RNA sequence: GGGAACGACUCGAGUAGAGUCGAAAACAAGGAAGCAAUACAAGAGAAGUUAGAAGAAACAGAGGUGCCCAAGGCCAGUCCAGAAUCAAGUGGAGCUGAUAAAUUACAGCCAGCUCUAGUACCAAUAGGCUCCCGUGAUAAGGCUCAAAGUGCAGCCAUCAACAAUGCCAUUCGUGGCAUUGUUGAUAAAAGAAACAACAACAACAAC
Reactivity to DMS in 0.01 (KOAc 150mM, MgCl2 10mM, bicine 150mM(pH8.5), 24C), signal-to-noise 1, nucleotides 027 to 156: c020a050a060g020g050a060a060g000c060a120a040u000a120c010a090a080g010a090g020a020a060g020u000u020a070g040a090a010g020a110a070a090c050a110g020a040g000g020u000g020c050c040c020a080a140g000g000c020c020a080g000u000c060c070a030g010a060a100u020c130a090a130g000u000g070g000a030g000c010u010g010a120u010a060a060a100u000u030a080c050a120g000c000c000a020g000c020u000c010u000a060g010u000a100c100c070a040a120u020a070g040g000c000u000c010c000c000g000u000g020a130u010a040a130g040g010c000u000c030a050a020a090g020u000g010c000a090g000c010c040
Reactivity to 2A3 in 0.01 (KOAc 150mM, MgCl2 10mM, bicine 150mM(pH8.5), 24C), signal-to-noise 2, nucleotides 027 to 156: c050a060a020g020g020a040a000g020c020a070a050u110a230c070a100a010g030a010g000a080a010g030u110u130a090g040a140a020g020a050a120a010c050a050g040a040g000g040u050g020c040c020c010a020a020g030g000c030c030a020g060u020c040c000a040g070a040a090u120c060a140a000g020u050g030g000a000g000c000u000g000a020u060a210a130a050u260u130a070c040a020g060c040c000a000g000c000u010c000u020a040g020u020a030c000c040a040a040u060a080g010g000c020u000c020c020c010g060u070g010a100u060a150a040g020g000c000u020c070a110a140a020g040u050g060c080a030g010c000c000
The record gives the reactivity of an RNA of 207 nucleotides to DMS and 2A3.
For DMS the reverse transcriptase was MarathonRT.
Source: RMDB library OK3TST, as collected in RNAgym.
The RNA was probed in 150 mM KOAc, 10 mM MgCl2 and 150 mM bicine (pH 8.5) at 24 C.
Reactivities are rounded to 0.1 and cut off at 0 and 3.
For DMS, 1,711 sequencing reads were counted.